RNA sequence: GGGAACGACUCGAGUAGAGUCGAAAAUUGAUGUGGGAGAACAUAGACGGAGGCACAUGUUCGCUUCUUCAAACAACGAAGAACUAGUGAAAGAGAUUCGUCGUUUAGCAUCUGAUAAUAUCGGAAAGAGUGCAUCACCAUUCGUGGUGAUGCACUCAAAAGAAACAACAACAACAAC
Reactivity to DMS in 0.01 (KOAc 150mM, MgCl2 10mM, bicine 150mM(pH8.5), 24C), signal-to-noise 1, nucleotides 027 to 126: u000u030g000a090u000g040u000g000g040g050a070g000a040a040c060a080u000a110g030a090c040g000g000a050g000g000c060a160c050a100u010g000u000u000c000g030c070u000u000c000u000u000c230a070a030a170c250a040a010c160g000a030a020g000a130a160c050u020a060g000u010g000a120a100a110g030a050g000a190u000u000c000g000u000c000g020u000u020u000a070g000c030a080u000c010u000g000a040u000a090a000u000a300u010c000g030g000a090a080a150
Reactivity to 2A3 in 0.01 (KOAc 150mM, MgCl2 10mM, bicine 150mM(pH8.5), 24C), signal-to-noise 1, nucleotides 027 to 126: u070u100g020a010u030g080u040g100g030g030a120g030a060a000c040a110u100a100g050a020c000g060g000a000g060g000c030a030c030a060u100g080u000u010c000g000c000u000u050c000u020u010c000a000a180a000c060a070a000c090g000a010a040g010a010a010c080u130a080g030u000g110a070a200a090g040a000g050a080u010u010c010g040u010c000g000u040u000u030a030g060c000a030u060c000u060g030a050u080a300a080u080a100u070c000g000g020a100a010a000